[RMDB]
The data come from the RNA Mapping Database (RMDB), library OK2TRN. This 177-nucleotide RNA was probed chemically with 2A3 and DMS. For DMS the reverse transcriptase was MarathonRT.
RNA sequence: GGGAACGACUCGAGUAGAGUCGAAAAGUGAUGAGGUCGAGUCCGGGCCUGAGACCGGUGUAUAAGCGCCUCACUCUGCCUGCGCUUAUACUCAGGGAUACUCAGGCUAUCCCUGACAUGGCAGAGACUUGAUUUCUGAAUUCGUUCAGGAGUCAAGAAAAGAAACAACAACAACAAC
Reactivity to 2A3 in 0.01 (KOAc 150mM, MgCl2 10mM, bicine 150mM(pH8.5), 24C), signal-to-noise 9, nucleotides 027 to 126: g230u180g030a090u070g020a030g050g170u040c030g010a010g030u000c040c030g040g030g000c000c010u010g010a020g030a120c050c090g040g010u050g000u010a020u000a020a010g000c000g000c020c010u050c020a070c010u020c010u010g000c000c010u000g000c010g000c000u020u010a010u010a030c010u030c060a060g100g000g040a090u100a170c010u010c020a000g010g000c000u000a010u000c000c000c000u030g090a030c020a070u040g000g000c010a000g000a010g000a030
Reactivity to DMS in 0.01 (KOAc 150mM, MgCl2 10mM, bicine 150mM(pH8.5), 24C), signal-to-noise 9, nucleotides 027 to 126: g010u010g010a050u000g000a300g000g010u000c020g010a090g010u010c030c140g010g010g010c010c010u000g000a030g000a120c030c020g010g010u000g010u000a020u000a020a020g010c010g010c000c090u000c100a070c020u000c010u000g010c010c010u000g010c020g010c010u000u000a020u000a010c030u000c060a050g010g010g010a110u010a070c020u000c040a040g000g010c060u000a020u000c010c000c010u000g010a070c160a040u000g000g020c010a020g000a040g010a300

The reactions ran in a buffer of 150 mM KOAc, 10 mM MgCl2 and 150 mM bicine (pH 8.5), at 24 C. For 2A3 the reverse transcriptase was SuperScript II with manganese.